Description:
The data come from the RNA Mapping Database (RMDB), library OK2TRN. Chemical mapping of a 177-nucleotide RNA with DMS and 2A3. The reactions ran in a buffer of 150 mM KOAc, 10 mM MgCl2 and 150 mM bicine (pH 8.5), at 24 C.
[RMDB]
RNA sequence: GGGAACGACUCGAGUAGAGUCGAAAACGAGGAGAGAGGGCAUCAGGAAGUUUGUAAGAGGGCCUUUCUCUCAGCCUGAGAAGAGAUGGCCGAUGACCAGUAAGAAGGUUCUCCAAAUAGGCGGUCACGGAAUAGGACAUUUCGAUGUCCUAUUCCGAAAAGAAACAACAACAACAAC
Reactivity to DMS in 0.01 (KOAc 150mM, MgCl2 10mM, bicine 150mM(pH8.5), 24C), signal-to-noise 2, nucleotides 027 to 126: c180g020a110g000g020a040g030a050g010a020g000g020g000c020a110u010c050a120g000g000a090a160g000u020u030u030g000u000a120a140g000a120g000g020g040c010c020u000u000u000c010u000c010u040c010a050g020c030c040u030g010a110g030a120a080g000a060g000a080u030g030g020c010c000g010a080u010g000a050c040c010a050g010u030a100a150g020a120a050g020g000u010u000c090u030c000c080a070a130a130u000a070g010g000c030g020g030u000c090a130
Reactivity to 2A3 in 0.01 (KOAc 150mM, MgCl2 10mM, bicine 150mM(pH8.5), 24C), signal-to-noise 1, nucleotides 027 to 126: c030g030a040g110g040a010g000a000g000a020g010g010g000c040a030u020c040a020g200g050a100a050g110u170u290u260g100u290a160a050g010a060g110g080g000c030c000u000u270u010c010u020c000u030c000a020g000c010c010u090g070a010g010a100a080g000a020g070a050u070g020g000c000c000g010a050u090g020a040c010c000a000g020u100a040a110g070a020a020g000g040u060u020c030u030c090c000a060a060a020u120a060g000g130c000g040g000u080c050a000

Reactivities are given for positions 27 through 126.